[RMDB]
RNA sequence: GGGAACGACUCGAGUAGAGUCGAAAACGAGCCAGAUAGGGCAGAACGCGCAGUCCGUGCAGACCACGGCAGAGUCGCAUUUGCGUUGCUCGAGGCGCAACCGAUACCGCCAAAGAGCCCGCCGCCCUACUUGACAGUUGUUCGCAACUGUCAAGUAAAAAGAAACAACAACAACAAC
Reactivity to 2A3 in 0.01 (KOAc 150mM, MgCl2 10mM, bicine 150mM(pH8.5), 24C), signal-to-noise 6, nucleotides 027 to 126: c030g010a010g110c010c020a030g050a180u170a050g000g010g010c010a020g060a120a020c050g000c000g000c000a030g050u090c000c000g000u010g010c040a030g040a190c050c000a000c000g010g000c010a020g010a030g190u250c020g010c020a030u060u070u080g000c010g060u060u190g000c000u000c010g000a020g000g000c010g000c030a050a050c030c000g030a070u110a100c010c030g000c000c000a050a240a020g010a010g000c000c030c000g010c010c010g000c000c000c000
Reactivity to DMS in 0.01 (KOAc 150mM, MgCl2 10mM, bicine 150mM(pH8.5), 24C), signal-to-noise 6, nucleotides 027 to 126: c080g000a150g000c020c040a110g000a120u030a040g000g000g050c020a100g030a080a080c160g000c020g010c000a130g000u030c010c020g000u010g030c210a210g010a120c250c010a030c010g000g010c040a160g010a110g010u030c020g000c010a110u020u010u050g000c010g000u020u020g040c010u000c010g020a300g000g000c040g040c140a090a110c170c090g010a090u020a060c220c020g000c010c000a020a100a180g000a020g000c000c300c020g010c020c160g000c000c000c000
Structure probing data (2A3 and DMS) for a 177-nucleotide construct. The reactions ran in a buffer of 150 mM KOAc, 10 mM MgCl2 and 150 mM bicine (pH 8.5), at 24 C. As a SHAPE reagent, 2A3 marks flexible, mostly unpaired nucleotides at the ribose 2'-OH. The 2A3 profile rests on 6,331 reads.